[RMDB]
RNA sequence: GGGAACGACUCGAGUAGAGUCGAAAAAAGCAGGGUGUGAGAGAAACUCUCUCCCAGCCGGUUCGCGCAGCCACCCUUUUCGACUCUACUCGGGUUAGCUGCGCGAACUGGCUGGGGUUCCCCAGAAUUAAACUGAAGGUUUCGACCUUCAGUUUAAAAAAGAAACAACAACAACAAC
Reactivity to DMS in 0.01 (KOAc 150mM, MgCl2 10mM, bicine 150mM(pH8.5), 24C), signal-to-noise 1, nucleotides 027 to 126: a080a110g020c140a030g000g000g020u000g010u010g010a110g010a190g000a160a120a090c020u000c020u010c040u000c000c000c010a020g010c000c010g010g000u000u000c020g010c000g040c020a010g020c010c040a050c040c010c030u010u000u000u000c000g010a030c010u000c010u000a010c010u000c010g000g000g000u010u000a040g010c000u000g010c000g030c000g000a020a020c000u000g000g000c000u020g030g000g000g000u000u000c000c000c010c110a150g000a100a110
An RNA of 177 nucleotides, treated with DMS and read out base by base. The RNA was probed in 150 mM KOAc, 10 mM MgCl2 and 150 mM bicine (pH 8.5) at 24 C. Values cover nucleotides 27 to 126. It was measured as part of the RMDB library M2PK90. In probing experiments dimethyl sulfate is read out at A N1 and C N3, which are open when not base-paired. For DMS the reverse transcriptase was MarathonRT.